Source: RMDB library TTRDEL, as collected in RNAgym. The record gives the reactivity of an RNA of 177 nucleotides to 2A3 and DMS. The 2A3 profile rests on 2,252 reads.

RNA sequence: GGGAACGACUCGAGUAGAGUCGAAAAGAUAUGGAUACAGGCAACAGCUACCCAUCGGAAACGAUGGUGUAGACAUGCCUUGAUCCUAAGUCAAAGUUCCCACCUUCGUUCGCGAAGGUGGGAACAACUUCCUACAGCUGUUCGCAGCUGUAGGAAGAAAAGAAACAACAACAACAAC
Reactivity to 2A3 in 0.01 (KOAc 150mM, MgCl2 10mM, bicine 150mM(pH8.5), 24C), signal-to-noise 1, nucleotides 027 to 126: g030a010u040a010u080g010g000a020u090a200c040a040g000g000c020a070a040c050a300g090c050u010a000c000c010c010a000u000c010g000g000a040a010a010c020g010a010u030g010g010u030g000u020a000g020a040c020a010u010g020c000c000u010u110g010a000u000c000c000u040a030a000g020u000c040a160a000a080g000u000u000c010c010c000a000c010c000u000u000c000g120u040u120c300g000c040g200a000a000g000g000u020g000g000g000a000a000c020a020a010
Reactivity to DMS in 0.01 (KOAc 150mM, MgCl2 10mM, bicine 150mM(pH8.5), 24C), signal-to-noise 1, nucleotides 027 to 126: g000a020u000a220u010g000g000a010u000a060c060a030g000g030c020a040a050c300a180g000c010u000a010c000c010c000a000u000c000g000g000a090a080a060c000g030a010u000g000g000u010g040u000a010g010a050c210a150u000g000c000c000u000u030g010a030u000c000c000u020a040a120g010u000c000a170a150a180g000u000u000c010c000c000a000c000c000u000u000c010g040u000u010c190g000c020g000a020a000g000g010u000g000g020g010a000a030c010a060a070